RNA sequence: GGGAACGACUCGAGUAGAGUCGAAAAGGUGUGCUGUGCGCACUGCGCAGAAGCGAGACCGAAAAAGGCGAAAAUGCGGCCCAAAACCGACUUCCAGCUGACCAAGCGCGCUGGCACGUCUAGGGUGCGCCACUCUAGAGUUCGCUCUAGAGUGGCGAAAAGAAACAACAACAACAAC
Reactivity to DMS in 0.01 (KOAc 150mM, MgCl2 10mM, bicine 150mM(pH8.5), 24C), signal-to-noise 2, nucleotides 027 to 126: g000g000u000g010u000g020c000u010g020u010g000c060g080c000a120c160u000g000c130g020c070a070g000a070a130g020c150g010a080g010a080c010c030g070a040a020a060a120a050g010g030c020g010a120a080a080a150u030g010c070g010g000c010c020c070a040a030a130a110c110c050g000a050c010u000u000c050c010a150g000c050u000g010a150c080c070a110a090g010c030g010c020g000c000u010g010g000c050a020c090g020u030c020u010a090g010g020g060u000g030
Reactivity to 2A3 in 0.01 (KOAc 150mM, MgCl2 10mM, bicine 150mM(pH8.5), 24C), signal-to-noise 1, nucleotides 027 to 126: g000g010u010g000u000g000c000u090g030u090g120c030g000c010a130c200u180g000c080g000c010a020g000a130a010g040c060g020a060g030a080c000c000g160a130a000a020a020a000g030g000c010g040a110a000a140a020u300g110c040g000g020c040c020c020a020a080a000a000c020c050g070a080c010u030u040c010c020a030g010c020u060g140a220c030c010a090a050g080c010g030c010g000c080u020g010g040c010a010c030g030u040c030u120a000g110g000g020u050g060